[RMDB]
RNA sequence: GGGAACGACUCGAGUAGAGUCGAAAAAUCGAAAAACUUCGUGGAAUGUAUGACCACCACGGAAUCCACAUGGGAUUCUGGCGUCUCCUGACACUUGCAUGUGUCGGGCCCAGCACAUUUGCAGCUGGUACUGUAAAACAUUCGUGUUUUACAGUACAAAAGAAACAACAACAACAAC
Reactivity to 2A3 in 0.01 (KOAc 150mM, MgCl2 10mM, bicine 150mM(pH8.5), 24C), signal-to-noise 9, nucleotides 027 to 126: a000u050c010g040a060a020a000a030a080c090u160u100c060g020u030g020g050a210a070u120g070u160a110u150g070a060c020c020a020c010c010a010c020g000g010a000a010u010c010c000a090c060a300u150g230g000g010a010u040u000c000u020g050g030c050g050u020c030u020c030c010u000g010a000c000a010c020u090u300g050c090a100u260g010u000g000u010c000g000g000g000c010c000c000a010g000c010a030c020a100u100u140u170g050c040a040g040c020u090g040
Reactivity to DMS in 0.01 (KOAc 150mM, MgCl2 10mM, bicine 150mM(pH8.5), 24C), signal-to-noise 9, nucleotides 027 to 126: a090u010c080g000a060a060a070a110a110c150u000u010c090g020u000g000g000a110a060u010g010u000a060u010g010a120c050c050a090c050c060a080c050g010g000a010a010u000c010c000a170c240a110u010g020g010g000a020u000u000c010u000g000g010c280g010u000c080u000c010c010u000g000a020c010a010c000u000u020g030c230a080u010g010u000g000u000c010g010g000g010c190c020c000a050g010c060a070c090a090u000u010u000g010c070a080g010c060u000g010